[RMDB]
RNA sequence: GGGAACGACUCGAGUAGAGUCGAAAAAAAAGAUAUGGAAGAUCCUAAGAGGCUCCACGUUUGACGCGAGAUCGGAAACGAUCUCGCCGAGUGGAGAACUACCUCGAUGGAUCUUCCUAAGUCAAAACUUGAGUGUCUAGUUCGCUAGACACUCAAGAAAAGAAACAACAACAACAAC
Reactivity to DMS in 0.01 (KOAc 150mM, MgCl2 10mM, bicine 150mM(pH8.5), 24C), signal-to-noise 1, nucleotides 027 to 126: a150a060a140a110g000a030u020a090u000g010g000a010a000g010a010u030c000c000u030a130a300g020a000g000g000c000u000c000c000a010c020g000u010u020u000g010a170c300g000c000g000a000g000a000u000c000g000g000a000a010a130c000g000a000u000c000u000c000g070c000c000g000a090g010u000g000g000a010g000a030a000c100u000a300c030c000u010c040g000a270u000g000g000a010u020c000u000u000c000c000u000a000a030g060u000c020a060a020a090a170

Source information: An RNA of 177 nucleotides, treated with DMS and read out base by base. Source: RMDB library TTRDES, as collected in RNAgym. Conditions: 150 mM KOAc, 10 mM MgCl2 and 150 mM bicine (pH 8.5), 24 C.